The record gives the reactivity of an RNA of 177 nucleotides to 2A3. Source: RMDB library OK1LIB, as collected in RNAgym.
RNA sequence: GGGAACGACUCGAGUAGAGUCGAAAAAUUGUCUCACCAGAGGGGGGGAAACGGCUGAGCUUUGCGCUCUCUUCUCUGGAGGUCAAGCAGCUAUCCGUGCAGUACCCAGUGAACCGACCGGGCAUGGCCGCGUGGGAAAGUUCGCUUUCCCACGCGGAAAAGAAACAACAACAACAAC
Reactivity to 2A3 in 0.01 (KOAc 150mM, MgCl2 10mM, bicine 150mM(pH8.5), 24C), signal-to-noise 1, nucleotides 027 to 126: a030u070u070g000u000c000u000c030a270c000c040a000g010a030g070g000g000g000g010g000g010a000a190a000c030g050g000c000u100g070a140g070c020u070u220u090g020c060g000c000u000c000u000c000u180u000c100u000c050u000g000g000a000g000g060u030c030a120a000g000c000a000g000c000u010a000u000c000c040g080u040g000c000a000g030u140a170c010c000c000a000g090u020g050a100a000c050c050g070a120c080c070g000g070g000c000a040u150g020g000